[RMDB]
RNA sequence: GGGAACGACUCGAGUAGAGUCGAAAACAAGGCCGUUCGCGGCCUUGAAAAAGAUAUGGAGUGUGGAUGGCUUUUGACGAAUAUGGACUCGGAAACGAGUCCCUAUUCGAUAAGCCACACACUCCUAAGUCAAAAAAACACUAGUUCGCUAGUGUAAUCAUAGUUAUCCCUUCGGGGAUAACUAUGAAAAAGAAACAACAACAACAAC
Reactivity to DMS in 0.01 (KOAc 150mM, MgCl2 10mM, bicine 150mM(pH8.5), 24C), signal-to-noise 1, nucleotides 027 to 156: c020a050a010g020g010c010c000g010u000u000c300g030c000g000g010c020c000u000u070g000a040a120a100a100a030g000a090u020a300u000g020g020a030g020u000g010u010g020g000a130u000g040g010c000u090u000u000u020g010a270c090g000a020a020u000a010u000g030g020a020c000u000c000g000g020a210a040a240c010g030a050g000u000c000c020c020u020a000u000u000c000g020a060u020a020a020g000c000c010a040c000a000c000a000c000u000c020c000u000a010a040g020u030c020a000a000a090a130a090a100a100c000a020c020u000a000g000u000u000c300g050c000u000a050g000u020g010u010a020a030
Reactivity to 2A3 in 0.01 (KOAc 150mM, MgCl2 10mM, bicine 150mM(pH8.5), 24C), signal-to-noise 3, nucleotides 027 to 156: c010a000a000g010g000c020c000g040u070u100c300g030c020g100g000c010c000u000u010g000a000a000a000a020a000g030a020u060a020u100g000g000a000g010u010g020u010g060g190a280u100g030g030c030u110u120u090u190g240a160c050g000a000a000u000a000u030g000g000a000c000u000c030g010g040a030a060a040c000g000a000g000u000c010c000c000u000a000u000u000c000g000a000u000a020a000g000c010c000a000c000a000c000a000c000u000c000c000u000a000a000g000u000c010a020a000a010a040a050a070a000c040a000c050u090a000g040u110u050c300g030c120u010a000g000u000g010u060a020a050